Conditions: 150 mM KOAc, 10 mM MgCl2 and 150 mM bicine (pH 8.5), 24 C.
An RNA of 207 nucleotides, treated with DMS and 2A3 and read out base by base.
2A3 adducts were read by reverse transcription with SuperScript II with manganese.
The 2A3 profile rests on 1,364 reads.
The DMS profile rests on 4,106 reads.
DMS adducts were read by reverse transcription with MarathonRT.
[RMDB]
RNA sequence: GGGAACGACUCGAGUAGAGUCGAAAACUUGGGGUUUUUGGACAAAGCAGGCUACUUUGUGCUUGGGUUGCUAGUUCUUGAGACCUGGAGUAAUUCUGAUUCACCUUGAACCUUAGGGUGUGGCCUGUUGGGGUCUCAGCUUAUUCUGAUGUAGGUCCUAGAUAUGUCCAUUCGUGGACAUAUCUAGAAAAGAAACAACAACAACAAC
Reactivity to DMS in 0.01 (KOAc 150mM, MgCl2 10mM, bicine 150mM(pH8.5), 24C), signal-to-noise 1, nucleotides 027 to 156: c040u000u010g040g010g030g000u000u010u010u020u020g010g030a110c040a060a090a130g010c010a000g000g000c060u000a050c040u040u000u010g010u000g000c080u000u000g000g000g030u000u000g000c030u000a130g000u000u000c050u020u000g010a120g020a060c050c020u010g000g010a050g010u000a040a130u000u000c050u000g010a110u000u000c040a010c040c050u000u000g020a000a070c050c050u010u000a090g020g010g010u010g030u000g010g000c050c040u000g010u010u010g000g000g000g000u010c010u010c020a020g040c300u000u000a050u000u020c040u010g010a120u000g030u000a030g000g020u000c100
Reactivity to 2A3 in 0.01 (KOAc 150mM, MgCl2 10mM, bicine 150mM(pH8.5), 24C), signal-to-noise 2, nucleotides 027 to 156: c050u040u050g020g010g000g000u030u000u000u060u130g050g010a040c060a040a040a030g050c060a030g020g020c040u080a030c030u140u160u200g050u110g030c050u030u030g050g000g040u010u020g000c020u020a050g050u110u050c010u060u120g050a110g000a030c000c000u030g010g010a010g000u070a040a080u160u060c030u050g050a120u130u040c020a110c090c000u040u090g040a070a100c010c000u060u120a060g040g000g000u040g010u050g000g020c010c000u070g020u090u080g010g010g010g000u010c000u000c000a020g000c000u050u070a060u140u050c010u050g080a100u110g110u120a010g000g000u000c030